Overview
The data come from the RNA Mapping Database (RMDB), library OK2TST. An RNA of 177 nucleotides, treated with 2A3 and DMS and read out base by base. For DMS the reverse transcriptase was MarathonRT. 2A3 adducts were read by reverse transcription with SuperScript II with manganese. The RNA was probed in 150 mM KOAc, 10 mM MgCl2 and 150 mM bicine (pH 8.5) at 24 C.

[RMDB]
RNA sequence: GGGAACGACUCGAGUAGAGUCGAAAACGCAUUAAACAUUUCGCGAUGAGUGCCAUGCCUGAUGCGACGCUGACGCGUCUUAUCAUGCCUACGGGACGAUGUGUAGGUCGGAUAAGGCGCUCACGCAACGGUACGCAUCGUUCGCGAUGCGUACCGUAAAAGAAACAACAACAACAAC
Reactivity to 2A3 in 0.01 (KOAc 150mM, MgCl2 10mM, bicine 150mM(pH8.5), 24C), signal-to-noise 2, nucleotides 027 to 126: c010g000c020a020u080u160a130a100a030c040a070u030u110u100c040g020c030g070a070u090g040a000g050u010g060c020c000a080u140g010c000c080u060g050a060u050g070c040g030a030c030g080c070u080g000a010c130g010c020g000u000c010u000u000a000u000c020a000u070g000c000c020u030a010c000g140g060g110a110c180g100a120u140g120u010g020u130a010g000g000u000c070g020g000a010u010a020a030g010g000c000g000c000u000c000a000c010g000c000a020
Reactivity to DMS in 0.01 (KOAc 150mM, MgCl2 10mM, bicine 150mM(pH8.5), 24C), signal-to-noise 1, nucleotides 027 to 126: c120g020c130a080u010u000a000a180a110c080a090u000u000u000c090g010c000g000a160u010g000a110g000u000g000c030c130a080u000g010c070c000u030g050a060u000g020c070g020a190c110g000c080u000g030a020c140g010c000g000u000c000u000u010a000u010c000a050u000g000c000c010u000a010c030g000g030g020a150c270g020a170u020g020u030g080u000a010g000g000u000c250g010g000a030u000a030a000g010g000c020g000c010u020c000a020c040g030c070a110